RNA sequence: GGGAACGACUCGAGUAGAGUCGAAAAAACUCAGCUAGGGAGAGUAUAACAUUCAUGUUGACGAGACCUAGACGAAUCACAGAGGAAAAUUAUUAAUCACUGGAUAGUAUUAGUAAUGACUCUGUGUAAAACUCUUCUACGUUCGCGUAGAAGAGAACUAAUCCCUACGCUUCGGCGUAGGGAUUAGAAAAGAAACAACAACAACAAC
Reactivity to 2A3 in 0.01 (KOAc 150mM, MgCl2 10mM, bicine 150mM(pH8.5), 24C), signal-to-noise 1, nucleotides 027 to 156: a000a000c010u020c020a010g000c010u000a000g020g000g020a050g000a090g130u100a160u050a300a040c050a000u130u210c070a030u200g000u090u010g020a020c020g000a000g010a030c000c000u010a000g060a000c010g070a010a000u050c000a000c010a000g000a000g030g000a140a280a040a000u000u000a000u000u000a000a000u010c010a010c010u060g100g020a050u280a300g000u010a000u000u000a000g000u000a000a000u010g010a010c000u000c000u000g000u020g000u000a000a010a000a000c000u000c000u000u020c000u000a000c010g080u040u100c260g010c000g040u000a000g000a000a000g000a000g010a000a000
Chemical mapping of a 207-nucleotide RNA with 2A3. 2A3 is a SHAPE reagent: it acylates the 2'-hydroxyl of flexible nucleotides of all four kinds. The RNA was probed in 150 mM KOAc, 10 mM MgCl2 and 150 mM bicine (pH 8.5) at 24 C. For 2A3 the reverse transcriptase was SuperScript II with manganese.